[RMDB]
RNA sequence: GGGAACGACUCGAGUAGAGUCGAAAAGUACGUAGAGUGUCGGCAAGCUCUAUAUAUGGACACUUACGAAGGGUUUUGGUUGUUUUGUAUCUCAAGCCGACUUUGAGUAUUUGAGGAAAAUACGAAAUGAAUCCUGUGACGUUCGCGUCACAGGAAACAUCUUAGAUUACUUCGGUAAUCUAAGAUGAAAAGAAACAACAACAACAAC
Reactivity to DMS in 0.01 (KOAc 150mM, MgCl2 10mM, bicine 150mM(pH8.5), 24C), signal-to-noise 2, nucleotides 027 to 156: g030u000a020c030g030u000a030g020a040g030u000g020u000c010g000g030c060a130a300g000c020u000c020u000a050u000a090u000a030u020g000g010a160c070a030c050u010u020a200c070g000a120a130g020g020g000u000u010u010u020g000g030u000u000g020u000u010u000u000g020u000a080u010c050u000c030a090a120g040c000c020g020a090c080u000u000u010g010a300g020u000a020u000u000u010g010a120g020g000a160a030a020a020u010a050c020g010a080a060a070u010g010a110a170u000c000c000u010g050u010g010a010c010g000u000u010c300g060c010g030u000c010a010c030a000g020g000a010a030a050
Reactivity to 2A3 in 0.01 (KOAc 150mM, MgCl2 10mM, bicine 150mM(pH8.5), 24C), signal-to-noise 2, nucleotides 027 to 156: g070u070a020c050g010u000a010g000a030g040u030g050u060c000g040g070c070a100a090g050c070u010c050u030a070u040a030u020a060u120g150g010a040c050a030c090u120u150a050c140g120a100a040g040g050g000u060u100u180u200g030g000u010u010g010u010u040u010u020g030u050a120u060c050u030c100a030a040g010c020c010g030a030c040u040u020u060g030a040g010u000a030u050u060u030g070a090g010g170a000a010a010a020u060a050c000g010a060a000a040u110g060a050a020u000c000c000u000g020u000g010a010c000g010u020u070c290g030c000g060u000c000a000c020a000g000g050a000a000a000